[RMDB]
RNA sequence: GGGAACGACUCGAGUAGAGUCGAAAACAGAGCUGAUGGGCCAUGUACCUAUCUAAAAUGAGAUCCCAUCUUGCACACUGUGCUAAUUUGAGAUUCUCAUGCCUCCUACUUGGAGAGAUCUGGACUACUAACUGUAUGACGUUCGCGUCAUACAGAACCUAAUCGCUGUGUUCGCACAGCGAUUAGGAAAAGAAACAACAACAACAAC
Reactivity to DMS in 0.01 (KOAc 150mM, MgCl2 10mM, bicine 150mM(pH8.5), 24C), signal-to-noise 1, nucleotides 027 to 156: c020a100g000a090g000c040u000g080a020u010g000g040g130c010c060a140u000g040u000a040c020c000u000a060u000c050u000a040a080a100a090u000g000a010g030a070u000c000c000c000a000u020c110u010u000g000c020a000c000a200c220u000g000u000g010c000u000a030a100u010u000u000g020a050g000a040u000u000c010u000c000a040u000g000c080c000u000c000c010u000a090c160u020u010g010g020a090g010a080g000a050u000c020u000g000g010a120c100u000a180c170u000a130a280c000u000g010u010a010u000g000a000c000g030u000u000c300g010c030g030u000c000a000u000a000c010a000g000a040a090
Reactivity to 2A3 in 0.01 (KOAc 150mM, MgCl2 10mM, bicine 150mM(pH8.5), 24C), signal-to-noise 7, nucleotides 027 to 156: c010a000g020a010g060c080u070g020a020u020g010g030g000c060c060a180u220g050u140a100c030c000u020a030u020c030u030a020a060a060a060u030g000a010g000a020u020c000c000c000a010u000c030u020u050g010c010a010c020a080c190u300g000u000g010c030u130a050a070u020u000u040g030a030g000a020u270u050c010u000c030a000u030g030c010c000u000c020c000u150a300c140u120u250g000g000a010g000a000g010a010u000c010u040g030g040a030c020u060a030c030u070a290a060c000u030g000u000a000u000g000a010c000g010u000u050c200g040c010g110u000c000a000u000a000c000a000g000a000a010